[RMDB]
An RNA of 177 nucleotides, treated with DMS and 2A3 and read out base by base. For DMS the reverse transcriptase was MarathonRT. The DMS profile rests on 6,799 reads.

RNA sequence: GGGAACGACUCGAGUAGAGUCGAAAAACUUCACGUAGCUUUUGCGCCCAUCCUUGAUAAACAACACUUAAUCCACCCUCUGUUUGCUCAAGAGCUUGUCGUCGUUGCGCUUGAGUCUCUGCCUCCAACACGAUCAGUAAUUCGUUACUGAUCGUGUAAAAGAAACAACAACAACAAC
Reactivity to DMS in 0.01 (KOAc 150mM, MgCl2 10mM, bicine 150mM(pH8.5), 24C), signal-to-noise 5, nucleotides 027 to 126: a070c070u000u000c080a080c100g020u000a060g010c050u010u000u010u000g010c090g020c030c030c030a100u000c050c030u010u020g010a090u000a060a080a080c090a070a060c090a050c100u000u010a100a100u000c030c040a080c050c030c020u010c040u000g010u000u000u010g010c050u000c040a060a050g000a070g010c030u000u000g000u000c090g020u000c070g010u000u000g010c040g020c030u000u000g010a070g010u000c050u000c050u000g000c030c010u000c050c060a120
Reactivity to 2A3 in 0.01 (KOAc 150mM, MgCl2 10mM, bicine 150mM(pH8.5), 24C), signal-to-noise 3, nucleotides 027 to 126: a010c040u110u070c050a010c070g070u020a010g030c020u060u030u060u150g010c020g040c030c000c000a060u040c020c000u040u050g040a070u110a100a110a010c050a030a030c030a030c060u100u130a090a040u070c030c020a000c040c040c000u020c010u000g090u070u120u110g010c010u000c020a000a040g010a040g050c010u060u040g070u060c040g040u030c020g080u040u070g010c020g010c040u010u020g020a040g010u000c020u000c010u050g040c000c010u000c010c000a010